[RMDB]
RNA sequence: GGGAACGACUCGAGUAGAGUCGAAAAUCCUAAGUCCCUUACAGCAUACUAUAAUCGGAGAUUGUCAGAACUAUCGGAAACGAUAGUUCUUGGAUUUAUCUCCGGUAGUAUGCGUAAGGGAUAUGGAAAAAGAUGAAUACGUUCGCGUAUUCAUCAAGACGCGUUGUAAGUUCGCUUACAACGCGUCAAAAGAAACAACAACAACAAC
Reactivity to 2A3 in 0.01 (KOAc 150mM, MgCl2 10mM, bicine 150mM(pH8.5), 24C), signal-to-noise 2, nucleotides 027 to 156: u050c000c000u030a210a120g040u010c000c000c010u000u000a030c040a120g000c010a040u000a000c000u070a050u190a300a240u250c020g000g000a000g000a000u000u000g010u000c000a010g000a010a000c000u020a000u000c000g050g060a060a090a040c000g000a000u000a000g000u030u000c000u000u030g010g000a000u180u210u100a040u000c000u000c000c000g000g000u000a000g000u000a000u000g000c000g000u000a000a000g000g000g000a000u010a000u010g010g120a010a030a020a060a080g020a000u030g000a000a010u020a020c010g000u030u050c220g000c000g150u020a020u020u000c010a000u010c000a000a010
Chemical mapping of a 207-nucleotide RNA with 2A3. Values cover nucleotides 27 to 156. The RNA was probed in 150 mM KOAc, 10 mM MgCl2 and 150 mM bicine (pH 8.5) at 24 C. The 2A3 profile rests on 1,546 reads.